[RMDB]
RNA sequence: GGGAACGACUCGAGUAGAGUCGAAAAAAGAUAUGGACAUCAGGGAGCUCGGGGCAUCAUCGAUCUCUAGUCGGAAACGACUAGAGGGAGAUGCGCCGUGAGCGAAGAACUGAUGUCCUAAGUCAAAGCUAUCCUAAUUCUUCGGAAUUAGGAUAGCAAAAGAAACAACAACAACAAC
Reactivity to 2A3 in 0.01 (KOAc 150mM, MgCl2 10mM, bicine 150mM(pH8.5), 24C), signal-to-noise 2, nucleotides 027 to 126: a020a000g100a030u140a040u170g000g000a000c000a010u000c000a000g000g000g040a040g000c000u010c010g180g000g000g000c000a070u170c000a010u050c230g010a040u030c010u000c000u010a000g010u020c000g000g040a100a100a100c010g000a000c000u000a000g000a000g010g000g000a000g010a000u010g000c010g010c010c060g300u040g000a010g000c010g000a060a000g010a030a020c010u000g000a000u010g000u000c000c010u000a000a010g000u000c040a150a010a000
Reactivity to DMS in 0.01 (KOAc 150mM, MgCl2 10mM, bicine 150mM(pH8.5), 24C), signal-to-noise 4, nucleotides 027 to 126: a100a060g000a020u000a300u000g000g030a010c010a010u000c010a000g000g000g000a120g030c000u000c010g020g000g010g020c000a070u010c010a030u000c030g000a300u020c010u000c000u000a010g000u000c000g010g010a170a070a170c000g030a030c000u000a000g000a010g000g010g000a300g000a000u000g030c300g020c000c000g000u000g010a020g020c000g000a100a120g010a150a210c010u000g000a010u000g000u010c000c010u000a010a050g000u000c020a080a110a210